[RMDB]
RNA sequence: GGGAACGACUCGAGUAGAGUCGAAAACAAGGGUUAUCUCACAACCUCAGAUGCUGGAUAAGUCCAAGGAGGCAGAAUCGCUUUUGGAUGACAUUCAGAAAGGCCGGAGUGAUUAUUUGGAAGAGAAUCCUAUUAUUUUCUUCGGAAAAUAAUAGGAAAAAGAAACAACAACAACAAC
Reactivity to DMS in 0.01 (KOAc 150mM, MgCl2 10mM, bicine 150mM(pH8.5), 24C), signal-to-noise 4, nucleotides 027 to 126: c070a140a150g010g000g000u000u000a060u000c030u020c060a150c110a050a080c030c020u010c110a100g010a120u010g020c010u000g010g010a030u010a070a300g010u000c020c000a010a050g010g010a070g010g010c060a110g000a140a090u020c140g000c010u000u010u020u010g010g000a030u000g000a170c200a060u000u000c010a030g000a080a070a080g000g010c030c050g000g000a060g020u000g000a070u000u000a040u000u000u010g000g010a070a050g010a100g000a060a120
Reactivity to 2A3 in 0.01 (KOAc 150mM, MgCl2 10mM, bicine 150mM(pH8.5), 24C), signal-to-noise 2, nucleotides 027 to 126: c010a050a070g030g010g010u070u070a130u050c040u010c040a090c000a020a090c020c010u000c030a030g070a190u180g030c020u000g010g000a020u010a070a020g000u000c000c000a040a030g150g100a040g140g110c020a020g170a180a170u140c110g020c000u000u030u060u110g010g000a020u010g030a040c030a080u000u000c010a000g050a120a050a010g070g010c060c020g040g010a050g020u040g020a010u000u140a040u140u110u170g050g030a040a040g010a020g020a160a020

Source: RMDB library RFMREP, as collected in RNAgym. An RNA of 177 nucleotides, treated with DMS and 2A3 and read out base by base. For DMS, 2,994 sequencing reads were counted.